[RMDB]
RNA sequence: GGGAACGACUCGAGUAGAGUCGAAAAUGGUUGUUAAAGCUAUUGCCGUAGAAGAUGUCAGCAAAACUCGGCGCAAUCACCACUUUAAAACCGUAGUCGGUCAAUGCCCAGGGCGCGUGCUCACGCGACGCGCUACCCUUUUCGAAGGGUAGCGCGUAAAAGAAACAACAACAACAAC
Reactivity to 2A3 in 0.01 (KOAc 150mM, MgCl2 10mM, bicine 150mM(pH8.5), 24C), signal-to-noise 2, nucleotides 027 to 126: u040g030g000u080u080g070u060u050a120a090a030g080c050u080a160u120u250g000c030c000g040u080a020g020a280a010g060a130u190g100u160c070a060g010c050a080a020a020a140c020u010c020g020g000c040g010c050a000a020u070c010a010c030c080a010c020u070u080u050a040a100a040a000c030c020g020u010a040g110u110c050g020g010u040c030a040a070u090g030c010c000c040a000g070g030g000c000g000c020g040u040g060c010u030c110a010c000g010c010g100
Reactivity to DMS in 0.01 (KOAc 150mM, MgCl2 10mM, bicine 150mM(pH8.5), 24C), signal-to-noise 2, nucleotides 027 to 126: u000g010g000u000u000g010u020u000a040a030a110g010c060u000a070u010u010g030c010c030g030u000a060g010a140a100g030a100u000g010u010c120a080g000c070a060a050a100a060c060u000c040g000g000c100g000c110a070a030u010c090a080c040c050a060c080u000u000u010a010a060a060a080c070c010g020u000a080g010u010c050g040g000u000c080a050a050u000g020c010c010c010a100g000g000g000c010g000c050g020u000g000c130u010c150a060c090g010c040g020
Conditions: 150 mM KOAc, 10 mM MgCl2 and 150 mM bicine (pH 8.5), 24 C. Chemical mapping of a 177-nucleotide RNA with 2A3 and DMS. Values are in units of 0.01, from 0 to 300, in steps of 10. 2A3 adducts were read by reverse transcription with SuperScript II with manganese. For DMS the reverse transcriptase was MarathonRT.